Background:
The record gives the reactivity of an RNA of 207 nucleotides to 2A3 and DMS. The reactions ran in a buffer of 150 mM KOAc, 10 mM MgCl2 and 150 mM bicine (pH 8.5), at 24 C. For DMS, 8,256 sequencing reads were counted. Values cover nucleotides 27 to 156. It was measured as part of the RMDB library OK3TST.
RNA sequence: GGGAACGACUCGAGUAGAGUCGAAAAUUCGGUCCUAUGGAGCGGACCGUAUGCUCCGUCAGGAUGUGGAGGUCUCGCGCCCUCCUUUGCGCGUAUGUACAUCGAUACGGUUAUGUCGCCUUUGUGUCGGCGUUUGACACUUACACAUACCGGAUAAGACUAUAAAUCCAUUCGUGGAUUUAUAGUCAAAAGAAACAACAACAACAAC
Reactivity to 2A3 in 0.01 (KOAc 150mM, MgCl2 10mM, bicine 150mM(pH8.5), 24C), signal-to-noise 7, nucleotides 027 to 156: u040u020c020g010g000u000c010c000u100a160u240g190g060a090g070c080g000g010a020c000c010g000u020a050u080g020c020u020c030c000g050u060c070a030g000g020a020u020g000u020g010g020a010g000g000u010c010u020c040g000c000g010c000c000c010u000c010c000u000u010u000g050c060g000c010g020u180a030u070g040u020a000c020a120u060c070g150a160u070a300c090g020g040u070u030a030u060g070u050c010g000c000c020u050u030u010g120u050g020u060c000g000g030c030g010u030u020u050g050a050c100a040c230u020u260a030c010a000c000a010u080a300c000c000g000g000a040u060a130a050
Reactivity to DMS in 0.01 (KOAc 150mM, MgCl2 10mM, bicine 150mM(pH8.5), 24C), signal-to-noise 3, nucleotides 027 to 156: u010u000c030g030g000u000c000c000u010a260u010g020g000a130g010c300g000g000a100c040c070g040u000a010u000g000c040u000c010c000g010u010c080a070g000g010a070u010g010u000g020g000a090g000g010u010c050u000c070g010c030g020c120c000c000u010c010c000u000u000u000g010c060g050c070g020u000a050u010g030u000a050c100a120u000c070g030a210u000a050c070g030g020u000u000a020u010g000u000c060g020c030c040u010u000u000g020u010g030u000c000g030g030c120g020u000u000u010g010a070c020a070c010u000u000a030c030a030c020a050u000a070c020c010g010g010a080u000a060a270